[RMDB]
RNA sequence: GGGAACGACUCGAGUAGAGUCGAAAAGCUUAGCAGUUCGCUGCUAAGCGACGUUGACGCCCCUCACCGUUGACAAAUCCCAAUGAGGACAGGUGACUGACAGAUAUUAAGCGUUCGCGCUUAAUAAGUAAUUAUUGAUCUUCGGAUCAAUAAUUACAAAAGAAACAACAACAACAAC
Reactivity to DMS in 0.01 (KOAc 150mM, MgCl2 10mM, bicine 150mM(pH8.5), 24C), signal-to-noise 8, nucleotides 027 to 126: g000c010u000u000a010g010c000a010g010u000u010c230g020c000u000g010c000u010a010a010g000c000g010a020c130g010u000u000g010a030c030g000c030c030c010c030u000c030a120c270c000g010u000u010g010a040c040a090a110a120u000c000c000c000a100a070u010g010a040g000g010a300c080a030g010g000u010g010a140c060u010g000a120c160a080g000a180u000a010u000u000a000a010g000c000g030u000u020c230g020c000g010c000u000u000a000a000u000a020a090
Reactivity to 2A3 in 0.01 (KOAc 150mM, MgCl2 10mM, bicine 150mM(pH8.5), 24C), signal-to-noise 5, nucleotides 027 to 126: g000c000u000u000a010g000c010a010g000u050u140c200g070c110u000g000c000u000a000a000g000c000g000a010c040g010u010u040g020a010c020g020c030c090c010c010u020c010a100c130c000g020u010u030g020a020c000a030a200a080u040c020c000c000a020a110u190g020a050g020g010a020c020a020g100g040u060g050a060c010u030g030a040c030a060g140a050u040a010u120u010a010a000g000c000g020u030u100c240g010c000g000c070u000u010a000a010u020a030a010

The record gives the reactivity of an RNA of 177 nucleotides to DMS and 2A3. Conditions: 150 mM KOAc, 10 mM MgCl2 and 150 mM bicine (pH 8.5), 24 C.